[RMDB]
RNA sequence: GGGAACGACUCGAGUAGAGUCGAAAAUACGUCCGGACCGCCAGAGCUGAAUUAGGCAGCUGGCCUAGCUCGUUCGCCGUGAAAUGUUUUAUCAGGAAAACAUUUUCAAAGAUACCUCCUGUGUACGUGUCGCUAUCUAGAGGCAGGUACGCGCAUGCCUCGGUUAAUCGUUCGCGAUUAACCGAGGAAAAGAAACAACAACAACAAC
Reactivity to 2A3 in 0.01 (KOAc 150mM, MgCl2 10mM, bicine 150mM(pH8.5), 24C), signal-to-noise 2, nucleotides 027 to 156: u060a020c040g030u020c020c000g050g030a070c010c130g010c060c000a030g020a020g030c010u060g030a260a140u260u060a080g000g020c000a040g000c010u050g000g000c000c000u010a010g010c020u010c080g010u010u010c030g020c020c050g020u030g030a000a010a000u000g080u000u030u030u040a230u130c160a080g090g080a000a060a000a000c010a010u030u040u200u250c090a060a080a010g040a040u100a060c000c030u060c000c040u020g000u000g000u020a020c080g170u010g020u060c000g000c020u040a100u300c080u250a070g010a030g020g030c010a020g010g020u020a020c000g000c000g000c000a050u170g060